[RMDB]
This 207-nucleotide RNA was probed chemically with DMS and 2A3. The 2A3 profile rests on 879 reads.
RNA sequence: GGGAACGACUCGAGUAGAGUCGAAAAUGGUUGUUCGCAACCAAUUAAGAUAUGGAACGAGCGUACUUGGAUUUAUGGGUUAAGUAUGUCGGAAACGACAUACGAGACCCAUUGUCAGUGAUCUCGUUCCUAAGUCAAUAGGGCCCUUCGGGGCCAACAACGUAAACCGGUUCGCCGGUUUACGUUGAAAAGAAACAACAACAACAAC
Reactivity to DMS in 0.01 (KOAc 150mM, MgCl2 10mM, bicine 150mM(pH8.5), 24C), signal-to-noise 1, nucleotides 027 to 156: u000g030g030u000u000g000u000u000c190g090c020a050a070c010c000a010a090u010u010a090a090g000a150u000a300u000g000g000a020a000c000g000a030g000c230g020u000a060c060u000u010g040g010a060u000u000u010a030u000g010g000g000u000u000a010a300g000u000a010u020g040u000c000g070g000a200a060a240c020g010a030c040a000u000a000c000g000a300g000a000c000c000c000a000u000u000g010u000c000a060g000u000g030a090u000c030u010c000g020u000u020c020c000u020a020a070g000u000c040a050a130u000a200g000g000g000c030c000c000u000u000c300g020g010g010g000c010c010a020a090
Reactivity to 2A3 in 0.01 (KOAc 150mM, MgCl2 10mM, bicine 150mM(pH8.5), 24C), signal-to-noise 1, nucleotides 027 to 156: u090g040g000u030u000g030u060u090c270g050c130a010a010c000c000a000a010u200u100a110a030g030a010u030a100u180g010g000a000a010c000g000a000g000c060g020u150a010c010u010u170g100g000a030u020u300u190a000u040g000g000g000u000u000a010a020g000u000a000u000g020u000c000g000g000a070a100a110c000g040a000c030a040u010a000c000g000a000g000a000c010c000c000a010u000u000g000u050c000a000g010u010g070a070u040c010u000c000g000u000u020c010c000u020a020a000g000u000c000a000a090u080a230g020g000g030c010c000c000u040u040c220g100g000g000g010c030c000a000a060